[RMDB]
RNA sequence: GGGAACGACUCGAGUAGAGUCGAAAAUGAGUGUACUCUUACAACUUCUCUGAGUACUUACAGCCUGUUAAAUAUAGUGAGUAUCGACGAGAGUGAGAUUGCACAUAUAAAUGAGACUAAGAGUGCCCUAGGGCAACGUAAUGCUUAUGUGAACAUAAGUUUACGUAUUAUUCGUAAUACGUAAACUAAAAGAAACAACAACAACAAC
Reactivity to DMS in 0.01 (KOAc 150mM, MgCl2 10mM, bicine 150mM(pH8.5), 24C), signal-to-noise 3, nucleotides 027 to 156: u010g020a110g070u000g040u000a020c060u000c010u000u000a080c030a080a080c070u000u010c000u000c030u000g000a280g020u000a020c010u010u000a100c050a150g010c130c060u000g020u000u000a100a120a170u010a120u000a120g000u020g010a080g040u000a020u000c020g020a240c240g000a070g000a150g010u010g010a080g000a060u000u000g020c030a020c020a080u000a080u000a060a070a110u000g010a150g010a100c050u000a040a130g000a090g000u000g010c000c000c010u010a090g030g000g010c030a000a030c050g000u000a090a070u010g020c010u000u000a130u010g030u010g000a050a080c070a110u000a110
Reactivity to 2A3 in 0.01 (KOAc 150mM, MgCl2 10mM, bicine 150mM(pH8.5), 24C), signal-to-noise 9, nucleotides 027 to 156: u220g020a050g030u010g010u010a010c010u000c000u010u050a050c030a260a150c150u230u100c010u010c000u030g020a010g030u000a000c000u000u010a020c010a040g130c020c060u180g100u270u230a090a210a090u210a080u070a110g010u010g010a000g010u010a030u200c050g030a040c020g010a040g000a000g010u010g010a010g000a010u020u050g000c030a010c020a010u130a010u030a050a110a080u140g050a050g020a030c030u070a040a080g090a030g090u040g010c020c000c000u050a160g020g020g010c030a070a020c050g090u100a090a080u140g000c020u070u080a060u110g080u040g080a090a020c050a070u150a120